[RMDB]
Chemical mapping of a 177-nucleotide RNA with 2A3 and DMS. It was measured as part of the RMDB library OK2TST. 2A3 adducts were read by reverse transcription with SuperScript II with manganese. For DMS, 826 sequencing reads were counted.
RNA sequence: GGGAACGACUCGAGUAGAGUCGAAAACUCAACGCUGCGCGCGACGGUUGGCGGGUCGCAGUACGUGCCGACGACCCGUGGCCACGCGGGAUCCCGGUACGGCCCCGCGCUUGUCCUGGACGGCGUACCUACGCUGCCGAUUCGUCGGCAGCGUAGGAAAAGAAACAACAACAACAAC
Reactivity to 2A3 in 0.01 (KOAc 150mM, MgCl2 10mM, bicine 150mM(pH8.5), 24C), signal-to-noise 2, nucleotides 027 to 126: c000u000c020a020a020c020g000c020u040g010c080g010c040g080c090g040a040c030g000g130u080u080g230g040c000g000g040g020u160c070g050c100a040g070u090a080c070g040u090g020c020c010g050a100c040g000a020c010c020c010g000u020g000g010c100c050a100c040g020c000g020g000g000a170u060c040c030c000g030g040u060a020c060g040g040c000c010c000c050g030c050g000c070u080u300g020u060c000c010u060g090g040a060c000g000g000c010g000u000a030
Reactivity to DMS in 0.01 (KOAc 150mM, MgCl2 10mM, bicine 150mM(pH8.5), 24C), signal-to-noise 1, nucleotides 027 to 126: c020u000c030a110a140c050g000c020u000g010c170g080c140g010c140g010a010c100g000g000u000u000g020g040c030g050g000g000u020c070g030c090a200g040u000a150c160g010u040g000c000c000g010a130c160g000a040c020c000c000g000u000g020g000c140c180a070c030g000c020g000g000g020a110u000c060c040c000g000g000u000a090c090g000g010c140c000c000c040g030c030g030c080u010u020g020u000c050c030u010g010g000a160c020g030g000c000g010u010a080